Chemical mapping of a 207-nucleotide RNA with 2A3 and DMS. DMS adducts were read by reverse transcription with MarathonRT. 2A3 adducts were read by reverse transcription with SuperScript II with manganese.
[RMDB]
RNA sequence: GGGAACGACUCGAGUAGAGUCGAAAAAGGAUCUUCGGAUCCUACGACGCGUACUACCUAGAGGUAUUAGACCGAUAAGUGGCUCCCAAAUAGGAGCCACUUUUGACGGUCGAAGUACUACCCACCUAGGUAUCGCUUUUGCGUGUUUCGACACGAACAACGAUGAGUUUUUCGAAACUCAUCGUUGAAAAGAAACAACAACAACAAC
Reactivity to 2A3 in 0.01 (KOAc 150mM, MgCl2 10mM, bicine 150mM(pH8.5), 24C), signal-to-noise 2, nucleotides 027 to 156: a000g040g000a010u060c060u150u150c300g150g020a000u000c080c000u000a030c110g090a050c070g000c000g000u100a130c010u000a010c010c010u000a000g000a050g000g000u020a130u300u030a250g000a000c000c010g010a030u010a030a030g000u000g000g000c000u020c000c000c060a130a280a000u260a060g000g000a000g000c000c020a020c010u010u000u000u030g050a010c000g000g000u000c000g000a010a000g000u000a020c030u010a030c020c060c000a080c020c010u020a000g000g010u010a020u150c020g040c000u060u020u080u210g050c030g000u040g020u050u130u150c140g040a050c010a000c160g130a150a090
Reactivity to DMS in 0.01 (KOAc 150mM, MgCl2 10mM, bicine 150mM(pH8.5), 24C), signal-to-noise 3, nucleotides 027 to 156: a050g010g000a000u000c000u000u020c300g080g000a050u000c000c000u010a020c060g040a020c080g020c080g020u010a110c120u000a010c000c020u000a010g000a130g010g010u000a030u000u000a300g010a020c000c000g010a170u000a010a000g050u010g010g000c000u000c010c000c020a000a150a250u020a040g020g030a020g020c000c000a010c000u000u020u000u000g080a090c060g030g010u000c000g000a090a180g010u010a020c010u000a040c030c010c060a300c200c000u020a010g020g010u010a030u000c040g000c020u000u000u000u000g020c040g040u010g050u000u000u010c030g000a070c050a090c030g010a150a180
The DMS profile rests on 4,847 reads.
Source: RMDB library RNAMAK, as collected in RNAgym.
The reactions ran in a buffer of 150 mM KOAc, 10 mM MgCl2 and 150 mM bicine (pH 8.5), at 24 C.